[RMDB]
This 177-nucleotide RNA was probed chemically with 2A3 and DMS. The DMS profile rests on 13,597 reads. The reactions ran in a buffer of 150 mM KOAc, 10 mM MgCl2 and 150 mM bicine (pH 8.5), at 24 C. For DMS the reverse transcriptase was MarathonRT.
RNA sequence: GGGAACGACUCGAGUAGAGUCGAAAAAGGACUACACAUCUGUCAGUGCAGAGAACACUGACAGGAGGGGCCAUCAAGGAAUGAGCAAGCCUUUUCAGAAUGUUGUUCCUAUUCACGAAGGGGCAGAGUACAAUCACAAAUUCGUUUGUGAUUGUACAAAAGAAACAACAACAACAAC
Reactivity to 2A3 in 0.01 (KOAc 150mM, MgCl2 10mM, bicine 150mM(pH8.5), 24C), signal-to-noise 8, nucleotides 027 to 126: a000g060g010a010c040u130a070c110a000c010a120u070c010u000g010u000c000a000g000u010g000c070a040g070a010g010a300a010c000a000c000u000g010a000c000a000g000g000a020g030g000g040g000c030c010a020u050c060a090a100g120g010a180a060u100g010a040g060c030a080a030g000c010c000u020u030u030u040c050a070g050a130a040u080g030u130u060g010u070u040c010c000u030a080u040u080c100a090c130g020a030a010g010g010g010g000c020a010g010a000
Reactivity to DMS in 0.01 (KOAc 150mM, MgCl2 10mM, bicine 150mM(pH8.5), 24C), signal-to-noise 9, nucleotides 027 to 126: a060g010g010a070c050u010a100c130a120c110a080u010c000u000g000u000c000a010g010u000g000c040a140g020a170g010a150a200c000a000c000u000g010a010c010a010g010g000a080g010g000g000g010c020c030a060u000c080a110a110g010g000a090a050u000g010a090g000c080a100a100g020c010c010u000u000u000u000c040a120g000a060a050u010g010u000u000g000u010u000c010c000u000a090u000u010c050a100c160g010a050a050g010g010g000g020c090a090g010a180